Chemical mapping of a 177-nucleotide RNA with DMS and 2A3. The DMS profile rests on 4,784 reads. 2A3 adducts were read by reverse transcription with SuperScript II with manganese. DMS adducts were read by reverse transcription with MarathonRT.
RNA sequence: GGGAACGACUCGAGUAGAGUCGAAAAUAUUUUCUGCGCCAGUCGAGAUGUUGAUUGGGUGUGGCACGCGACCAAAAGCAGAAAGAGCCAUAAAUGAGACAAUAGCACCACAAGAGUUAGGAAGUAACCCUAUCCAUCUAUUCGUAGAUGGAUAGGGAAAAGAAACAACAACAACAAC
Reactivity to DMS in 0.01 (KOAc 150mM, MgCl2 10mM, bicine 150mM(pH8.5), 24C), signal-to-noise 5, nucleotides 027 to 126: u010a060u010u000u000u000c010u000g010c050g000c060c070a060g000u000c020g020a060g020a130u010g010u010u010g010a080u000u000g010g010g030u010g030u000g010g000c030a080c110g020c060g000a060c050c060a040a080a100a150g010c020a030g000a020a040a070g010a120g020c010c020a080u000a020a070a070u000g010a120g010a040c070a040a070u000a080g010c070a050c030c030a060c090a070a080g010a070g010u020u000a070g000g000a060a100g010u010a060a120
Reactivity to 2A3 in 0.01 (KOAc 150mM, MgCl2 10mM, bicine 150mM(pH8.5), 24C), signal-to-noise 2, nucleotides 027 to 126: u070a060u030u090u020u060c040u040g000c020g040c060c020a010g020u030c020g000a040g050a300u130g100u220u080g050a100u020u100g010g040g010u090g000u030g020g000c060a030c080g060c020g030a100c020c040a060a040a070a000g000c020a010g070a020a090a020g070a010g000c050c000a020u140a100a130a060u180g030a070g000a060c020a050a040u000a060g020c000a000c000c010a020c000a000a010g030a000g050u070u080a060g050g050a030a030g000u060a060a050